[RMDB]
The record gives the reactivity of an RNA of 207 nucleotides to 2A3. It was measured as part of the RMDB library OK3TST. For 2A3, 1,112 sequencing reads were counted.
RNA sequence: GGGAACGACUCGAGUAGAGUCGAAAAGUCGGCUGCCAUGACGCAACUGUCGACCGCGUUGGGCACCAACACGGUUCAGCAGAACCUCAACGCGCAGGCGCAGGCCCGCAACACGGCGGCGACGAGCGCCGGGGCGGCGGCGCAGACUCGCGGCCGUGGUAGAACGUGGAUUCGUCCACGUUCUACCAAAAGAAACAACAACAACAAC
Reactivity to 2A3 in 0.01 (KOAc 150mM, MgCl2 10mM, bicine 150mM(pH8.5), 24C), signal-to-noise 2, nucleotides 027 to 156: g100u070c010g000g040c040u060g080c030c010a230u060g050a140c020g050c040a080a100c030u070g040u150c050g010a000c000c000g000c000g000u000u010g030g090g100c240a270c180c070a050a000c020a000c000g020g010u180u120c030a080g000c000a020g050a110a090c010c030u140c060a060a160c090g020c000g020c010a000g010g060c050g000c040a040g040g070c030c010c040g050c030a060a060c060a010c050g000g000c020g100g030c000g000a000c040g000a000g010c010g030c000c010g020g000g020g010c010g000g030c010g010g000c000g030c000a000g160a060c010u010c020g020c000g060g000c000c000g000u020